RNA sequence: GGGAACGACUCGAGUAGAGUCGAAAAGAAACGCUGGCCGAGCAGGUCGACCCAGCCGCCGUAGUAGCCUUGCAGGGCGCCGACGGUGACGCCGAUCAGAGAACUGAGCACGGUCAGGGUCAGGGCAAGGCCCUGACGGAUUCGUCCGUCAGGGCCUAAAAGAAACAACAACAACAAC
Reactivity to DMS in 0.01 (KOAc 150mM, MgCl2 10mM, bicine 150mM(pH8.5), 24C), signal-to-noise 4, nucleotides 027 to 126: g000a100a140a040c070g030c020u000g010g010c050c010g000a120g030c070a220g000g020u000c020g000a060c010c070c030a300g010c000c020g030c020c000g020u020a100g010u010a130g040c010c000u010u000g050c300a140g020g000g010c020g020c080c030g010a050c010g000g000u010g000a130c300g010c020c030g010a050u000c010a110g020a190g000a120a120c120u000g020a070g030c070a100c010g010g010u010c030a050g000g010g000u000c050a100g000g010g040c150a130
Reactivity to 2A3 in 0.01 (KOAc 150mM, MgCl2 10mM, bicine 150mM(pH8.5), 24C), signal-to-noise 2, nucleotides 027 to 126: g050a010a120a000c050g000c150u020g010g000c000c000g000a000g020c040a030g000g030u000c010g010a040c020c000c010a000g020c000c010g020c000c000g030u080a080g030u030a060g030c010c000u040u200g180c110a180g000g060g000c010g020c010c000g010a000c000g000g050u020g010a010c040g000c030c000g000a020u060c050a040g060a010g040a220a060c060u130g020a050g030c020a010c040g010g010u000c020a010g070g010g000u020c040a030g060g010g050c090a060